[RMDB]
RNA sequence: GGGAACGACUCGAGUAGAGUCGAAAAUCAUGGUGGUUCGCCACCAUGAACUGUCUACUCGCUAGAAAACGAUCAAAACUAGCGACUAGACUAACGAUCGAACUGGGGGACAGUUCGCUGUCCCCAAUAUCCGGAAAUAAUUCGUUAUUUCCGGAUAAAAAGAAACAACAACAACAAC
Reactivity to 2A3 in 0.01 (KOAc 150mM, MgCl2 10mM, bicine 150mM(pH8.5), 24C), signal-to-noise 5, nucleotides 027 to 126: u030c000a000u010g000g000u010g000g070u040u050c190g040c060c000a000c000c000a000u000g000a010a010c000u010g000u020c000u000a000c000u010c010g000c000u000a010g050a120a240a060a070c110g070a170u170c100a020a060a030a200c010u000a000g020c000g000a000c010u010a010g000a000c000u020a080a040c030g080a070u200c060g040a100a110c180u250g110g000g000g000g020a000c010a000g000u020u010c060g000c020u000g000u000c000c000c000c000a000a000
Reactivity to DMS in 0.01 (KOAc 150mM, MgCl2 10mM, bicine 150mM(pH8.5), 24C), signal-to-noise 6, nucleotides 027 to 126: u010c000a010u000g000g030u000g000g010u000u020c220g030c010c000a010c010c000a000u000g000a020a110c070u000g010u000c000u000a010c180u000c000g020c000u000a010g000a110a050a120a140c140g010a090u000c120a090a080a120a120c000u000a000g000c000g010a020c070u000a010g000a010c000u010a050a060c180g000a050u000c050g010a130a090c270u000g000g020g000g010g000a040c010a010g010u000u010c190g020c000u010g000u000c000c000c000c000a010a020
Chemical mapping of a 177-nucleotide RNA with 2A3 and DMS. For 2A3 the reverse transcriptase was SuperScript II with manganese.